[RMDB]
RNA sequence: GGGAACGACUCGAGUAGAGUCGAAAAAGUUAGGUUCGCUAUGGUGCAACUCUUUAAGGCAAUAACGAACUAAUUCUAAGCAAGUAAUGGAGAAAUGCCAGGGUCACUAUCUAGCCAUAAUCGUGCUGUAAGUGACUUAGAUUCGUCUAAGUCACAACCCAUGCAAACUAUUCGUAGUUUGCAUGGGAAAAGAAACAACAACAACAAC
Reactivity to 2A3 in 0.01 (KOAc 150mM, MgCl2 10mM, bicine 150mM(pH8.5), 24C), signal-to-noise 5, nucleotides 027 to 156: a000g110u090u060a060g030g050u030u030c030g010c030u050a010u050g060g030u040g060c050a090a100c050u080c060u120u200u140a110a060g020g000c020a030a070u090a100a050c060g030a010a010c030u030a010a040u120u040c070u160a080a010g050c040a040a070g040u130a050a130u100g050g040a040g030a070a080a050u050g000c010c000a020g030g000g000u010c020a010c030u030a060u140c020u020a020g000c010c000a030u110a080a070u120c100g060u060g040c040u030g030u130a150a050g000u010g000a000c000u000u000a000g000a000u020u010c070g000u000c140u000a010a000g000u000c000a000c010a000a000
Reactivity to DMS in 0.01 (KOAc 150mM, MgCl2 10mM, bicine 150mM(pH8.5), 24C), signal-to-noise 2, nucleotides 027 to 156: a090g010u010u010a060g030g000u000u000c030g030c000u020a030u000g000g020u000g010c040a100a090c120u010c140u010u000u010a090a090g010g030c010a110a050u000a020a090c030g020a040a060c040u000a060a120u000u010c060u000a070a180g020c060a070a070g040u000a040a090u000g030g000a080g020a080a080a070u000g030c020c040a120g020g030g020u000c030a060c030u000a050u000c050u000a080g020c030c020a060u000a040a100u010c050g030u000g020c010u010g020u000a080a140g000u000g020a040c000u010u010a010g020a090u000u000c300g010u000c010u000a010a020g030u000c010a020c000a040a100

Chemical mapping of a 207-nucleotide RNA with 2A3 and DMS. For 2A3, 4,028 sequencing reads were counted. 2A3 adducts were read by reverse transcription with SuperScript II with manganese.